[RMDB]
RNA sequence: GGGAACGACUCGAGUAGAGUCGAAAAAAAGCAGGCGACAGCACAAAACCGUCCGGCCACUGACACUGCCGCCUUCCUUUUCUUUGCUUCCCCACGAAAAAUGGUGAAACGCAGAACGCCAGGGCCGCAUAGGAUAGAUGUUCGCAUCUAUCCUAUGAAAAGAAACAACAACAACAAC
Reactivity to DMS in 0.01 (KOAc 150mM, MgCl2 10mM, bicine 150mM(pH8.5), 24C), signal-to-noise 7, nucleotides 027 to 126: a060a040a070g020c270a030g000g010c030g020a060c050a030g030c130a100c120a060a080a100a060c090c080g000u010c110c030g010g000c020c030a120c060u000g000a050c070a110c020u000g010c010c020g010c090c020u000u000c060c010u000u000u000u000c060u000u010u010g010c100u000u000c000c010c010c080a120c120g000a020a050a050a070a100u000g010g000u010g010a050a040a110c140g010c060a060g000a070a090c150g020c020c010a030g010g010g020c020c040g010
Reactivity to 2A3 in 0.01 (KOAc 150mM, MgCl2 10mM, bicine 150mM(pH8.5), 24C), signal-to-noise 4, nucleotides 027 to 126: a000a020a010g050c030a010g010g020c000g020a030c020a020g020c090a040c040a130a100a040a060c040c030g070u060c030c010g020g010c010c000a190c090u030g000a020c010a000c040u020g000c010c010g000c010c000u030u040c030c000u030u040u040u050c030u090u090u060g030c010u010u020c000c010c000c010a050c040g110a130a050a010a020a030u080g010g010u060g040a100a050a020c070g000c050a040g030a200a030c030g010c020c000a010g010g000g030c010c010g020
Chemical mapping of a 177-nucleotide RNA with DMS and 2A3.
For DMS the reverse transcriptase was MarathonRT.
The reactions ran in a buffer of 150 mM KOAc, 10 mM MgCl2 and 150 mM bicine (pH 8.5), at 24 C.
The DMS profile rests on 9,486 reads.